[RMDB]
RNA sequence: GGGAACGACUCGAGUAGAGUCGAAAAGGACGCCGUGUUUGGAGAGCGGACGAAAGCUCUUGCUUCCGGCCCGCUGUCAAGCGUACCACACGAUCGAGUGAGGGUCGACUCGACAGGUCGGCCAUACGCCGGUUUCUACGUUCGCGUGGGAACCGGCAAAAGAAACAACAACAACAAC
Reactivity to DMS in 0.01 (KOAc 150mM, MgCl2 10mM, bicine 150mM(pH8.5), 24C), signal-to-noise 6, nucleotides 027 to 126: g020g020a050c060g010c050c300g000u020g010u010u020u010g010g010a060g000a030g000c000g000g000a100c020g000a050a020a020g000c000u020c200u030u030g000c010u000u000c030c000g000g000c140c000c020g000c000u000g000u010c020a100a120g000c020g000u000a100c020c020a090c000a030c030g010a090u030c060g010a090g000u010g000a140g000g010g020u000c010g000a020c000u000c050g020a130c240a180g000g000u010c000g000g000c000c010a040u020a020c160
Reactivity to 2A3 in 0.01 (KOAc 150mM, MgCl2 10mM, bicine 150mM(pH8.5), 24C), signal-to-noise 4, nucleotides 027 to 126: g030g000a000c010g000c010c000g070u070g040u050u050u110g070g010a040g010a000g010c000g000g020a010c020g040a030a000a000g000c000u040c040u110u230g030c000u020u000c010c000g010g000c000c000c000g000c000u020g070u040c000a010a020g010c000g010u020a080c000c000a020c000a010c000g030a050u070c030g030a040g030u030g000a070g010g010g010u000c000g010a050c000u030c080g060a030c040a020g000g010u030c000g000g000c000c000a010u040a030c060